[RMDB]
RNA sequence: GGGAACGACUCGAGUAGAGUCGAAAAACACAUGGUGGUUCAGAGGGAGAUUGAGGGUGAAGUUCACGACGUACUCCUUAGGGGGAGGGGGCAGGUCUCUUCCGGGAGGCAGCCCACCUAUGCGGCCGAUUAACUCACUUUUCGAAGUGAGUUAAUCAAAAGAAACAACAACAACAAC
Reactivity to DMS in 0.01 (KOAc 150mM, MgCl2 10mM, bicine 150mM(pH8.5), 24C), signal-to-noise 6, nucleotides 027 to 126: a080c080a110c110a070u010g010g020u020g010g000u000u020c080a110g010a090g030g000g000a060g000a090u040u010g010a090g010g000g010u000g000a070a070g000u000u010c050a060c070g000a060c070g010u010a090c070u010c010c020u010u020a100g020g000g000g010g000a050g000g010g000g000g010c020a070g040g010u000c010u010c010u000u010c160c080g020g000g020a030g000g000c020a070g000c000c000c000a060c020c020u000a060u040g010c030g000g010c160c100
Reactivity to 2A3 in 0.01 (KOAc 150mM, MgCl2 10mM, bicine 150mM(pH8.5), 24C), signal-to-noise 8, nucleotides 027 to 126: a000c070a010c020a050u100g040g020u040g010g020u150u090c040a030g040a040g050g060g000a090g030a120u080u160g050a110g020g030g010u060g050a080a020g030u050u090c060a020c080g060a020c020g020u050a060c030u050c030c010u050u140a090g010g010g010g030g000a040g010g010g000g000g010c040a060g000g110u010c010u010c000u060u020c040c060g060g010g000a010g000g000c000a010g010c010c000c010a190c020c010u050a070u140g050c020g040g010c040c040
Chemical mapping of a 177-nucleotide RNA with DMS and 2A3. For DMS the reverse transcriptase was MarathonRT. The data come from the RNA Mapping Database (RMDB), library OK1LIB. For 2A3, 11,750 sequencing reads were counted. 2A3 adducts were read by reverse transcription with SuperScript II with manganese. The reactions ran in a buffer of 150 mM KOAc, 10 mM MgCl2 and 150 mM bicine (pH 8.5), at 24 C.